[RMDB]
RNA sequence: GGGAACGACUCGAGUAGAGUCGAAAAGAUAUGGACUUGCUACCCACCUGAGGUCUGUCUAUAGGAGCUCGUCGGAAACGACGAGAACUACUCCUAAUAGACAGACCUCAGAGGCAAGUCCUAAGUCCUACUUGUUAGAGUUCGCUCUAACAAGUAGAAAAGAAACAACAACAACAAC
Reactivity to DMS in 0.01 (KOAc 150mM, MgCl2 10mM, bicine 150mM(pH8.5), 24C), signal-to-noise 4, nucleotides 027 to 126: g000a170u000a130u000g020g010a030c010u010u010g010c000u010a150c030c000c050a300c150c010u000g000a010g000g000u000c000u000g010u000c000u000a010u000a040g000g000a010g000c000u010c010g020u000c000g000g000a090a140a300c010g010a010c000g000a010g000a030a010c030u020a300c010u000c020c010u010a060a090u000a010g000a010c010a000g010a000c000c000u000c000a010g000a040g020g000c010a010a020g010u000c000c000u000a010a080g000u010c130
Reactivity to 2A3 in 0.01 (KOAc 150mM, MgCl2 10mM, bicine 150mM(pH8.5), 24C), signal-to-noise 1, nucleotides 027 to 126: g180a090u300a300u300g000g010a000c000u060u020g000c010u190a300c030c020c000a000c010c020u010g000a000g000g030u010c000u000g040u000c000u000a000u010a020g000g000a030g000c020u010c010g010u000c000g050g020a090a130a110c010g000a000c020g010a030g000a000a020c020u230a090c010u000c010c010u000a040a020u030a000g000a020c020a000g010a000c000c030u010c010a000g000a000g000g000c000a000a000g000u030c000c000u010a000a000g030u100c020
Structure probing data (DMS and 2A3) for a 177-nucleotide construct. It was measured as part of the RMDB library TTRINS. DMS adducts were read by reverse transcription with MarathonRT. For 2A3, 4,484 sequencing reads were counted. Reactivities are given for positions 27 through 126.